[RMDB]
RNA sequence: GGGAACGACUCGAGUAGAGUCGAAAAUAAAACAUGGUAACCAUAUGGAUUCGCACAAGGUAGCCAUGAAAAGUGCGAAUCCAUAUAAAGCUGAGCGUUAGGAAAAACCUAAUGCUCAGCAAAAAAACAAUAUAUGGUUGUUCGCAACCAUAUAUUGAAAAGAAACAACAACAACAAC
Reactivity to 2A3 in 0.01 (KOAc 150mM, MgCl2 10mM, bicine 150mM(pH8.5), 24C), signal-to-noise 1, nucleotides 027 to 126: u130a000a030a010a010c060a040u110g070g040u070a050a060c000c010a020u000a000u030g000g010a000u000u000c000g000c010a000c000a040a030g200g000u070a030g220c060c030a010u030g030a010a020a030a010g000u000g000c010g000a010a000u000c000c000a000u000a000u000a010a010a010g000c000u000g000a000g000c000g010u000u000a010g010g030a080a060a070a050a060c000c000u000a010a010u000g010c000u000c010a000g010c000a000a000a000a000a000a000a020
Reactivity to DMS in 0.01 (KOAc 150mM, MgCl2 10mM, bicine 150mM(pH8.5), 24C), signal-to-noise 2, nucleotides 027 to 126: u000a090a080a130a160c090a090u000g010g020u010a100a120c040c040a060u010a030u000g000g000a000u000u000c010g000c000a000c000a080a080g020g030u010a090g010c090c140a030u000g010a060a130a120a140g010u000g010c010g010a010a000u000c000c000a010u000a000u000a040a050a120g010c000u000g010a000g010c000g020u010u000a010g000g010a080a120a070a140a170c000c000u000a000a010u000g010c000u000c000a000g000c000a000a000a050a080a060a020a020
Chemical mapping of a 177-nucleotide RNA with 2A3 and DMS. For 2A3, 2,523 sequencing reads were counted. It was measured as part of the RMDB library M2PK90. DMS adducts were read by reverse transcription with MarathonRT.